Annotation: Chemical mapping of a 207-nucleotide RNA with DMS and 2A3. For DMS, 6,451 sequencing reads were counted. It was measured as part of the RMDB library M2RFPK. Values cover nucleotides 27 to 156.
RNA sequence: GGGAACGACUCGAGUAGAGUCGAAAAGUCUGUGCGUUUCCAUUUGAGGAUCCUGAAAACGGGCUUUUCAGCAUGGAACGUACAUAUUAAAUAGUAGGAGUGCAUAGUGGCCCGUAUAGCAGGCAUUGAGGCGAGGAUUGUUUCGACAAUCCUCGAAGACGAUAUGUUAGUUCGCUAACAUAUCGUCAAAAGAAACAACAACAACAAC
Reactivity to DMS in 0.01 (KOAc 150mM, MgCl2 10mM, bicine 150mM(pH8.5), 24C), signal-to-noise 3, nucleotides 027 to 156: g010u020c050u010g000u000g010c010g000u000u010u010c010c000a110u010u010u000g000a060g000g000a030u010c010c000u000g000a040a050a150a270c030g060g020g020c110u010u010u000u010c010a080g020c090a030u000g000g010a060a020c020g030u000a030c020a060u000a000u000u030a070a070a180u000a080g030u000a080g010g010a100g030u000g010c030a120u000a100g030u000g010g000c010c010c050g000u000a100u000a110g000c050a030g010g030c040a090u010u000g000a100g030g010c020g020a030g010g030a040u000u000g010u000u010u010c300g020a120c020a020a020u000c010c010u010c010g020a020a080
Reactivity to 2A3 in 0.01 (KOAc 150mM, MgCl2 10mM, bicine 150mM(pH8.5), 24C), signal-to-noise 5, nucleotides 027 to 156: g040u010c050u030g010u010g010c000g020u020u160u060c010c010a030u050u020u060g020a010g010g000a030u020c010c010u050g090a100a070a070a110c100g010g010g000c010u030u030u000u010c010a020g030c050a010u000g000g010a010a000c010g030u020a000c000a000u020a040u000u120a070a050a060u140a010g040u030a010g010g060a040g010u070g000c060a050u070a080g040u070g070g030c020c010c040g020u060a040u050a070g040c060a020g070g000c030a030u050u140g060a060g040g110c000g000a000g000g000a000u000u000g020u010u070u070c070g020a010c010a000a010u000c000c000u000c000g000a010a010